The record gives the reactivity of an RNA of 207 nucleotides to 2A3. For 2A3, 524 sequencing reads were counted. 2A3 is a SHAPE reagent: it acylates the 2'-hydroxyl of flexible nucleotides of all four kinds.
[RMDB]
RNA sequence: GGGAACGACUCGAGUAGAGUCGAAAAGGUCAGGCCUGAUCGGAAACAGCAGCAGGUGAGUCCGCCUUAUGUGAAGGAUCGGCUGAAACACGAGGAAAUACUAAGCCAACGCAAGACGGUAGCCGAAAAAAUCUAGUUCACUUCGGUGAACUAGAAACCACAUCCCCAGGUUCGCCUGGGGAUGUGGAAAAGAAACAACAACAACAAC
Reactivity to 2A3 in 0.01 (KOAc 150mM, MgCl2 10mM, bicine 150mM(pH8.5), 24C), signal-to-noise 1, nucleotides 027 to 156: g110g000u050c030a050g020g010c010c000u150g000a050u100c020g130g100a080a170a000c110a030g050c030a000g050c040a000g090g010u010g070a060g070u050c070c060g020c000c050u100u100a110u110g140u070g010a040a000g020g020a020u010c000g020g000c000u030g000a030a150a000c070a000c030g070a050g020g060a030a150a000u190a130c120u030a030a090g020c000c020a060a000c050g000c020a110a000g040a020c030g080g020u010a040g000c000c000g030a020a020a020a020a020a020u000c000u000a000g000u010u000c010a030c010u030u000c170g000g000u000g000a000a000c000u000a000g020a000a050a000
The reactions ran in a buffer of 150 mM KOAc, 10 mM MgCl2 and 150 mM bicine (pH 8.5), at 24 C.